[RMDB]
RNA sequence: GGGAACGACUCGAGUAGAGUCGAAAAGCGUACCGCUCGGCGAGGGGGAUGCGGACCUUCACGUAGGCGUAGUGGAUGCCGAAGGUGGCGGUCUCCCUUCCCGUGAGGCUCGGCGUGCCUUCGCCGGCGACUCACGAACCUUCGGGUUCGUGAGUCGAAAAGAAACAACAACAACAAC
Reactivity to 2A3 in 0.01 (KOAc 150mM, MgCl2 10mM, bicine 150mM(pH8.5), 24C), signal-to-noise 2, nucleotides 027 to 126: g060c030g060u070a050c020c040g030c080u090c020g020g000c030g030a020g000g010g000g020g030a020u080g110c010g070g000a020c010c000u030u060c030a060c090g110u160a090g000g080c150g020u030a030g090u090g140g050a020u090g000c000c020g010a020a000g160g020u050g040g150c000g000g000u020c030u050c000c000c020u010u010c010c000c010g010u020g020a040g020g010c070u020c040g070g000c010g030u070g040c000c040u020u020c000g000c000c030g010g000
Reactivity to DMS in 0.01 (KOAc 150mM, MgCl2 10mM, bicine 150mM(pH8.5), 24C), signal-to-noise 3, nucleotides 027 to 126: g010c170g000u000a140c080c010g030c070u010c000g020g020c110g000a030g000g000g010g000g010a020u000g000c020g000g010a010c090c010u000u000c010a060c050g020u010a160g020g000c270g020u000a080g020u010g020g020a050u010g020c000c010g010a110a100g020g010u010g000g020c000g000g000u000c170u000c000c000c000u000u000c120c010c010g000u000g010a020g000g050c150u000c010g010g010c020g020u000g000c020c020u000u010c010g010c000c010g020g010

An RNA of 177 nucleotides, treated with 2A3 and DMS and read out base by base.
For DMS the reverse transcriptase was MarathonRT.
The reactions ran in a buffer of 150 mM KOAc, 10 mM MgCl2 and 150 mM bicine (pH 8.5), at 24 C.
For DMS, 3,691 sequencing reads were counted.
The data come from the RNA Mapping Database (RMDB), library OK2TST.
The 2A3 profile rests on 3,495 reads.